An RNA of 177 nucleotides, treated with DMS and 2A3 and read out base by base. Reactivities are given for positions 27 through 126. For 2A3 the reverse transcriptase was SuperScript II with manganese.
[RMDB]
RNA sequence: GGGAACGACUCGAGUAGAGUCGAAAAUUAAAGAGAAAACUCACAUACAGUCAGACGCGUCUAAGGAGUGGUCAACCUUACGACUGUUUGAAAUAAUGCGUCAAAAGAUCGAAAGAUCAAAAAAAAACAAUAUGAUCUUGUUCGCAAGAUCAUAUUGAAAAGAAACAACAACAACAAC
Reactivity to DMS in 0.01 (KOAc 150mM, MgCl2 10mM, bicine 150mM(pH8.5), 24C), signal-to-noise 3, nucleotides 027 to 126: u000u010a090a060a110g000a160g000a100a070a120a110c070u000c030a120c120a080u020a030c020a010g000u010c010a120g000a020c020g020c040g020u010c130u000a010a010g000g010a010g000u010g010g000u000c030a170a040c000c000u000u000a010c090g010a020c000u010g000u010u010u010g010a080a060a050u000a070a050u010g010c000g010u000c010a120a060a120a060g000a010u000c000g010a110a100a100g010a010u000c010a000a000a000a030a020a070a050a090a110
Reactivity to 2A3 in 0.01 (KOAc 150mM, MgCl2 10mM, bicine 150mM(pH8.5), 24C), signal-to-noise 3, nucleotides 027 to 126: u090u050a070a050a030g100a010g080a070a100a100a100c040u060c030a060c020a060u270a040c000a010g020u030c010a020g010a010c010g000c020g030u010c000u010a010a000g010g010a010g030u040g020g000u040c000a030a020c010c000u020u010a010c060g010a010c010u020g020u050u080u070g040a030a010a000u070a010a040u070g010c010g000u000c010a020a030a040a060g010a000u000c000g010a030a070a040g010a010u000c000a020a110a030a000a000a000a000a000a000